[RMDB]
Chemical mapping of a 177-nucleotide RNA with 2A3 and DMS. For DMS, 3,460 sequencing reads were counted. It was measured as part of the RMDB library TTRDEL. The RNA was probed in 150 mM KOAc, 10 mM MgCl2 and 150 mM bicine (pH 8.5) at 24 C.
RNA sequence: GGGAACGACUCGAGUAGAGUCGAAAAGAUAUGGACGCAAGUGGACAUGCGUGCUCGGAAACGAGUCACGCAACAGCCACUGCGUCCUAAGUCAAAAGCCACGACUUAGUUCGCUAAGUCGUGGCAAUCCCUUUAAACCGUUCGCGGUUUAAAGGGAAAAAGAAACAACAACAACAAC
Reactivity to 2A3 in 0.01 (KOAc 150mM, MgCl2 10mM, bicine 150mM(pH8.5), 24C), signal-to-noise 1, nucleotides 027 to 126: g000a000u030a020u070g020g030a010c010g010c040a190a180g000u050g000g030a150c130a300u040g000c000g000u000g000c000u020c000g020g000a010a010a030c010g000a020g170u180c010a000c000g000c000a010a020c010a010g050c000c000a000c000u000g000c000g000u000c000c000u020a020a000g000u000c040a030a040a000a100g000c000c030a000c010g000a020c000u010u010a000g020u090u080c230g010c190u030a040a000g000u000c000g000u000g000g020c000a000a000
Reactivity to DMS in 0.01 (KOAc 150mM, MgCl2 10mM, bicine 150mM(pH8.5), 24C), signal-to-noise 3, nucleotides 027 to 126: g000a030u000a220u010g010g000a010c000g000c000a050a050g020u000g010g010a100c150a160u000g000c000g020u000g000c000u000c000g000g000a050a070a120c000g010a010g000u010c010a000c000g000c010a020a020c240a180g000c010c000a010c000u010g010c000g000u000c000c000u010a010a030g000u000c030a080a070a140a110g010c000c000a000c010g000a020c000u000u000a000g000u000u010c220g010c020u010a010a000g010u000c000g020u000g000g000c000a000a000